[RMDB]
RNA sequence: GGGAACGACUCGAGUAGAGUCGAAAACGUUAGGUAUGUAACCUUUCCUUGUGAGAACGUUGGUUCGACUCCGCUUGCCGACAAUUUCAUAAGAAAAGUUGCAAAUCGAGCUGCUGAGUUACCCGGAACAUUCACCCAACUUCGGUUGGGUGAAUGUAAAAGAAACAACAACAACAAC
Reactivity to 2A3 in 0.01 (KOAc 150mM, MgCl2 10mM, bicine 150mM(pH8.5), 24C), signal-to-noise 3, nucleotides 027 to 126: c090g030u080u060a030g000g060u050a030u090g100u040a020a020c020c000u010u090u000c010c020u060u050g060u070g020a040g030a070a010c050g020u010u020g060g050u100u070c040g060a100c080u030c080c040g010c060u040u070g000c020c000g000a010c020a010a030u000u070u000c050a050u020a100a020g030a010a060a030a000g020u020u020g000c030a010a090a070u020c020g010a020g050c000u040g000c040u050g040a000g020u000u070a070c000c010c010g030g050a060
Reactivity to DMS in 0.01 (KOAc 150mM, MgCl2 10mM, bicine 150mM(pH8.5), 24C), signal-to-noise 1, nucleotides 027 to 126: c050g010u020u030a040g010g010u000a020u010g030u030a060a020c020c040u000u000u000c010c040u000u000g000u010g000a000g020a020a010c300g020u000u000g010g000u000u000c030g000a160c050u040c060c180g000c080u030u000g000c000c000g020a000c020a030a300u000u010u000c000a040u000a030a030g000a020a000a000a010g000u000u000g040c000a000a060a050u000c020g000a080g000c040u000g010c160u030g010a140g000u020u010a050c030c010c010g010g000a130